[RMDB]
Conditions: 150 mM KOAc, 10 mM MgCl2 and 150 mM bicine (pH 8.5), 24 C. Structure probing data (2A3 and DMS) for a 207-nucleotide construct. Values cover nucleotides 27 to 156. The DMS profile rests on 11,092 reads.
RNA sequence: GGGAACGACUCGAGUAGAGUCGAAAAGGUAGGCCUUGUGUUUCAGAAACUUCGCCUAGCGCGUUGCAUUAUGGUAACAACUUUGAUUAUCUUUUUGACACCUUUGUUGCUAAUUUGCAUGAAUUGGAUGUUGAAAAGUUUAAGGGUGUUUACAAGCAUAUAGUCACACAUUCGUGUGUGACUAUAUAAAAGAAACAACAACAACAAC
Reactivity to 2A3 in 0.01 (KOAc 150mM, MgCl2 10mM, bicine 150mM(pH8.5), 24C), signal-to-noise 7, nucleotides 027 to 156: g120g020u090a040g030g070c050c010u040u040g020u010g000u030u060u050c060a060g050a080a120a060c020u050u050c050g000c020c030u130a170g010c110g000c020g110u010u050g000c050a070u100u080a070u300g060g020u030a020a020c030a010a060c010u050u050u050g070a070u060u170a050u130c000u020u010u000u010u010g010a000c000a010c000c000u020u030u050g090u090u020g010c010u030a230a290u270u190u210g000c010a000u050g070a140a020u050u030g020g080a130u000g000u000u010g000a000a000a000a000g020u060u060u080a030a010g020g010g010u030g040u010u050u070a020c030a030a050g040c020
Reactivity to DMS in 0.01 (KOAc 150mM, MgCl2 10mM, bicine 150mM(pH8.5), 24C), signal-to-noise 3, nucleotides 027 to 156: g020g010u000a020g010g010c000c030u000u020g000u000g000u000u010u000c110a170g010a170a090a070c020u000u000c030g020c000c020u000a080g020c060g030c070g010u000u000g030c030a080u000u000a100u000g020g010u000a030a020c020a040a050c020u000u000u000g000a100u000u000a090u010c000u020u000u000u000u010g010a030c010a060c010c010u000u010u000g010u000u000g010c020u000a080a170u000u000u000g030c020a040u010g010a080a140u000u000g020g010a050u000g020u000u000g040a030a020a030a040g020u000u000u000a050a040g000g000g010u000g010u000u000u010a050c050a060a090g020c180